[RMDB]
RNA sequence: GGGAACGACUCGAGUAGAGUCGAAAAUGCAUGUUUCCGCAAUCAGGGACGAAUAGCUCAGUAAAACUGCGAUGAUUUAGUCUGGCUGUGUAGAUAACUACGUGAAAAUGUAGCUAAGGGAAGGCAGUUCUCAAUGCCCCUUCGGGGGCAUUGAGAAAAAAGAAACAACAACAACAAC
Reactivity to DMS in 0.01 (KOAc 150mM, MgCl2 10mM, bicine 150mM(pH8.5), 24C), signal-to-noise 1, nucleotides 027 to 126: u000g000c040a200u010g000u010u000u000c010c020g040c130a030a080u010c060a030g000g010g000a090c050g020a000a040u040a000g010c060u010c000a080g010u000a020a060a060a300c140u000g000c030g000a070u030g000a060u060u000u010a130g000u000c010u000g000g000c010u040g000u010g050u040a060g010a080u000a050a210c010u000a010c020g100u000g000a120a140a060a000u000g000u000a010g010c080u000a040a050g010g000g000a080a120g000g020c040a120g010
Conditions: 150 mM KOAc, 10 mM MgCl2 and 150 mM bicine (pH 8.5), 24 C. The record gives the reactivity of an RNA of 177 nucleotides to DMS. For DMS the reverse transcriptase was MarathonRT. Values cover nucleotides 27 to 126. It was measured as part of the RMDB library RFM100.